Chemical mapping of a 207-nucleotide RNA with DMS and 2A3. The RNA was probed in 150 mM KOAc, 10 mM MgCl2 and 150 mM bicine (pH 8.5) at 24 C. The DMS profile rests on 4,095 reads. For DMS the reverse transcriptase was MarathonRT. For 2A3, 1,402 sequencing reads were counted. Source: RMDB library VIROID, as collected in RNAgym.
RNA sequence: GGGAACGACUCGAGUAGAGUCGAAAAACACCCCCAACCGACGGGCCGGCUGUUCUUCUUUCCCUUCUCUCGUCUUCCUCGGUCAACCUCUUAAGUUCCUCUUCUUCUUCCUUGCUGAGGUGCUUCCCUCCCGCGGCCAGCUGCUUUCUCUUGUUCUAUAAUGCGUUAUGUUCGCAUAACGCAUUAUAAAAGAAACAACAACAACAAC
Reactivity to DMS in 0.01 (KOAc 150mM, MgCl2 10mM, bicine 150mM(pH8.5), 24C), signal-to-noise 1, nucleotides 027 to 156: a040c090a230c050c020c070c020c050a090a080c050c030g040a100c080g000g020g010c010c050g020g040c030u010g030u020u000c050u010u010c040u010u000u000c050c010c010u020u000c010u010c050u020c020g000u010c030u010u010c000c000u000c090g040g000u010c050a090a070c040c010u010c040u000u000a110a120g000u020u000c020c000u020c040u010u000c010u010u000c010u010u000c080c040u010u000g040c090u000g020a160g030g050u010g020c090u000u010c010c010c010u000c000c040c000g000c080g010g060c010c030a150g040c030u000g000c010u000u000u010c110u020c060u010u010g020u000u020c050u010
Reactivity to 2A3 in 0.01 (KOAc 150mM, MgCl2 10mM, bicine 150mM(pH8.5), 24C), signal-to-noise 1, nucleotides 027 to 156: a000c070a100c020c000c020c050c010a020a070c030c040g060a020c020g020g000g000c060c070g030g040c070u020g010u030u040c020u090u000c040u070u060u050c010c010c000u040u060c030u020c030u020c030g080u000c040u090u070c000c000u030c040g020g020u040c070a060a040c030c010u050c020u120u070a110a050g010u070u020c000c010u020c000u000u000c000u060u020c000u090u060c050c000u030u070g020c020u040g050a030g030g040u030g050c030u050u040c010c010c000u010c000c000c030g010c000g000g000c000c000a050g000c020u030g000c010u040u100u020c020u020c030u070u070g050u090u030c020u020